Structure probing data (2A3 and DMS) for a 177-nucleotide construct. Conditions: 150 mM KOAc, 10 mM MgCl2 and 150 mM bicine (pH 8.5), 24 C. For DMS, 5,497 sequencing reads were counted. DMS adducts were read by reverse transcription with MarathonRT.

RNA sequence: GGGAACGACUCGAGUAGAGUCGAAAAGAUAUGGAUCAGGACUUCGAUAAGCGACGUAUCGGAAACGAUACUCGCUUUUGACGAAGCUCCUGAUCCUAAGUCAAACGUAAGACUUCGGUCUUACGAACACUGUCAAACUGUUCGCAGUUUGACAGUGAAAAGAAACAACAACAACAAC
Reactivity to 2A3 in 0.01 (KOAc 150mM, MgCl2 10mM, bicine 150mM(pH8.5), 24C), signal-to-noise 2, nucleotides 027 to 126: g020a020u110a020u200g000g010a020u000c000a000g010g000a000c000u000u010c020g070a100u070a160a010g010c020g030a060c220g010u010a010u000c000g010g020a060a100a030c000g010a000u010a010c010u000c000g000c000u020u020u000u020g010a020c010g010a010a010g010c000u020c000c000u000g010a000u000c000c000u010a000a000g010u000c030a070a070a070c020g010u010a010a000g010a010c020u060u160c300g150g000u000c000u000u000a010c010g000a030a000
Reactivity to DMS in 0.01 (KOAc 150mM, MgCl2 10mM, bicine 150mM(pH8.5), 24C), signal-to-noise 5, nucleotides 027 to 126: g010a050u010a300u010g010g000a000u000c000a000g000g000a090c000u000u000c000g040a130u010a020a010g000c000g010a020c300g020u000a000u000c000g010g000a110a110a190c000g010a010u000a000c000u000c000g000c000u010u010u010u000g000a200c200g000a010a000g000c220u000c010c000u000g020a000u000c000c000u000a000a080g010u000c040a080a100a280c020g010u000a000a000g010a040c000u000u030c240g020g010u000c000u000u000a000c000g010a130a170
2A3 adducts were read by reverse transcription with SuperScript II with manganese.